[RMDB]
RNA sequence: GGGAACGACUCGAGUAGAGUCGAAAAUACCGUCUUCUCCCCGACGGUUUCAAUCCAUAGCUUCACGUUGUGUAGCGUAGGUGGAAGGUAUAGUGUGGUGUAUAAACACCACAUAGUCUCUUAGGGGUCAAGCUGAUAAACUUCGGUUUAUCAGCAACACUACAUUGGACUUCGGUCCAAUGUAGUGAAAAGAAACAACAACAACAAC
Reactivity to 2A3 in 0.01 (KOAc 150mM, MgCl2 10mM, bicine 150mM(pH8.5), 24C), signal-to-noise 4, nucleotides 027 to 156: u060a000c000c000g000u010c010u160u030c040u080c000c000c000c010g020a010c010g000g010u010u030u080c030a020a050u010c000c010a040u040a100g020c020u050u070c030a040c060g300u300u240g010u130g030u080a020g020c050g090u080a070g020g080u020g030g020a030a020g060g040u130a050u140a280g060u040g000u000g030g000u010g040u030a130u120a300a170a000c000a000c000c000a000c000a000u000a010g010u000c000u000c020u110u170a020g000g010g010g000u030c050a060a020g000c000u000g000a000u000a000a010a000c000u040u070c130g060g000u000u000u000a000u000c000a000g000c000a010a000
Reactivity to DMS in 0.01 (KOAc 150mM, MgCl2 10mM, bicine 150mM(pH8.5), 24C), signal-to-noise 1, nucleotides 027 to 156: u000a030c020c000g000u000c000u010u020c030u020c000c020c010c060g000a010c000g010g000u000u000u020c080a140a140u000c040c020a050u010a150g000c040u000u000c020a030c040g020u000u010g020u000g020u000a060g050c010g040u010a050g010g030u010g000g010a050a090g040g020u000a040u000a300g030u010g050u010g010g030u010g060u010a240u000a140a030a100c010a000c000c000a000c010a020u000a050g020u000c030u000c040u000u000a260g010g020g000g000u000c080a060a120g000c000u000g000a050u000a010a000a030c000u000u000c280g040g010u010u000u000a020u000c000a000g000c010a020a040